[RMDB]
RNA sequence: GGGAACGACUCGAGUAGAGUCGAAAAAACAACGUAUCGCCUACGGCUAUUGAAAUUCCUCAGAUGGCUAUACGCGAACAACUACACAACGGGGCCACUGUUAGAAAUCAAAUCGUGGCUAGAGGAGCAAGAGGAAUGGUAAAGGUCUUAUACAACACUCUCACAAAAUAUUCGUAUUUUGUGAGAGAAAAGAAACAACAACAACAAC
Reactivity to 2A3 in 0.01 (KOAc 150mM, MgCl2 10mM, bicine 150mM(pH8.5), 24C), signal-to-noise 3, nucleotides 027 to 156: a000a000c070a030a010c020g020u040a020u040c030g010c010c000u060a050c080g040g000c020u070a100u110u120g050a080a100a060u070u040c010c000u020c020a030g050a120u110g030g000c000u040a020u020a070c020g000c030g100a060a020c020a040a020c060u200a030c080a010c030a120a120c080g090g020g030g010c020c010a020c020u010g020u080u050a060g060a080a130a040u160c060a040a050a050u070c060g010u010g000g000c020u000a010g010a020g070g010a020g020c040a050a010g020a000g070g000a040a040u080g010g020u080a100a080a040g000g010u000c030u080u150a090u080a090c050a100a030c010a020
Reactivity to DMS in 0.01 (KOAc 150mM, MgCl2 10mM, bicine 150mM(pH8.5), 24C), signal-to-noise 2, nucleotides 027 to 156: a050a040c020a060a060c020g010u000a040u010c080g020c000c020u000a100c040g030g000c020u000a070u030u000g000a110a060a150u000u000c020c010u000c010a160g020a100u000g020g000c020u010a120u000a050c020g020c010g020a080a090c070a070a100c060u000a100c050a060c020a080a120c030g030g010g000g000c000c000a020c030u010g050u000u000a070g030a120a070a150u000c040a070a070a090u000c120g010u000g000g030c010u000a100g000a090g020g010a060g010c030a050a110g020a090g000g000a010a030u000g020g020u020a010a050a040g040g000u000c020u010u000a150u000a080c030a040a080c070a100